This 207-nucleotide RNA was probed chemically with 2A3. Reactivities are given for positions 27 through 156. 2A3 adducts were read by reverse transcription with SuperScript II with manganese.
RNA sequence: GGGAACGACUCGAGUAGAGUCGAAAACUCGCUGCCCGAGUUCGAGCAUGGGCCAAUUGCCGAACGGAGAGAGCGCGAGAGGAAGGAAGCCGACCGAGAGGGGAUGAAUUGGUAAAGAUGAGGGGAACGCCGAGGGGACACCUCCCAAGAGGGCAAACAGUUUAACACGGUUCGCCGUGUUAAACUGAAAAGAAACAACAACAACAAC
Reactivity to 2A3 in 0.01 (KOAc 150mM, MgCl2 10mM, bicine 150mM(pH8.5), 24C), signal-to-noise 1, nucleotides 027 to 156: c000u000c010g050c080u190g000c030c020c010g040a040g030u020u060c050g020a050g080c030a030u080g040g150g030c070c020a150a190u150u090g000c020c010g000a000a000c000g090g010a070g000a010g010a010g070c000g000c000g030a050g010a060g050g000a010a050g050g000a050a000g020c050c040g030a050c010c060g000a030g040a020g050g030g010g000a020u100g000a090a050u100u070g030g000u110a010a050a070g070a050u180g010a040g000g000g010g020a000a080c080g080c100c000g000a070g000g000g010g000a000c000a060c070c010u010c000c000c000a050a030g040a090g030g030g000c040a010a020a000